Chemical mapping of a 177-nucleotide RNA with 2A3 and DMS. The 2A3 profile rests on 737 reads. Conditions: 150 mM KOAc, 10 mM MgCl2 and 150 mM bicine (pH 8.5), 24 C. Values are in units of 0.01, from 0 to 300, in steps of 10. Values cover nucleotides 27 to 126. Source: RMDB library RFM100, as collected in RNAgym.

RNA sequence: GGGAACGACUCGAGUAGAGUCGAAAAAAAGGAACCGCAUCGCCGCCAAUCUCGCACUUGCACAAACUUAUAUUGCACUGCAGUAUGGGUCGGGGCGGGAAUGCGAGCCGGGUUCGGACAUGUACCGUGCAAUUCUCAUGUUCGCAUGAGAAUUGCAAAAAGAAACAACAACAACAAC
Reactivity to 2A3 in 0.01 (KOAc 150mM, MgCl2 10mM, bicine 150mM(pH8.5), 24C), signal-to-noise 2, nucleotides 027 to 126: a000a000a000g050g000a030a000c020c000g020c040a130u080c020g000c000c000g020c010c070a050a100u010c000u000c000g040c000a200c140u080u160g050c000a010c050a020a100a000c010u020u030a020u060a050u040u010g000c080a080c300u300g000c000a000g000u020a000u010g000g000g060u070c060g020g000g060g010c010g030g020g050a010a010u100g010c060g020a020g030c000c020g020g000g040u030u070c030g000g030a000c010a080u190g000u020a020c000c010g030
Reactivity to DMS in 0.01 (KOAc 150mM, MgCl2 10mM, bicine 150mM(pH8.5), 24C), signal-to-noise 1, nucleotides 027 to 126: a000a030a080g000g000a040a020c030c000g000c010a070u010c100g000c030c170g060c180c060a130a100u000c020u040c000g050c060a090c010u060u000g010c160a030c120a120a120a190c070u100u000a000u000a000u000u020g020c090a200c180u020g010c000a000g000u000a020u010g000g030g000u060c260g010g000g000g000c030g000g000g060a100a000u080g000c000g000a090g050c040c100g000g050g040u000u000c010g060g010a250c140a030u110g000u010a060c010c000g070